[RMDB]
RNA sequence: GGGAACGACUCGAGUAGAGUCGAAAAGACGCUAAGCUCUAUCGACCGACAGGUCGGGAACGGAACAGCCGUACUGCAGUAGUACCUAUAGAGGAACUGCGUCACGCGACGAAGAACAUAGCGUUGAAGUCAGAGACCUGUUCGCAGGUUUCUGACUAAAAGAAACAACAACAACAAC
Reactivity to 2A3 in 0.01 (KOAc 150mM, MgCl2 10mM, bicine 150mM(pH8.5), 24C), signal-to-noise 9, nucleotides 027 to 126: g030a000c000g000c010u030a040a070g040c010u010c010u040a120u120c020g010a010c000c010g070a120c120a150g000g010u010c010g010g000g010a090a030c050g030g050a100a070c040a050g060c050c030g020u040a040c030u180g000c020a010g010u170a020g060u100a160c010c010u150a140u180a270g200a050g070g000a040a010c010u020g000c000g020u040c070a010c030g050c030g030a080c020g050a060a060g010a070a010c040a080u050a010g010c010g010u000u030g040a050
Reactivity to DMS in 0.01 (KOAc 150mM, MgCl2 10mM, bicine 150mM(pH8.5), 24C), signal-to-noise 9, nucleotides 027 to 126: g010a000c000g020c000u010a030a070g010c040u000c010u010a170u020c010g000a020c000c000g000a170c300a100g010g010u000c000g010g000g000a110a140c100g000g010a120a090c170a130g010c080c040g010u000a050c080u030g010c020a040g010u010a090g020u030a070c010c000u010a190u030a100g010a070g010g010a090a050c010u000g000c000g000u010c150a040c060g010c050g010a070c030g010a190a030g000a030a040c060a130u000a010g000c010g010u000u000g000a120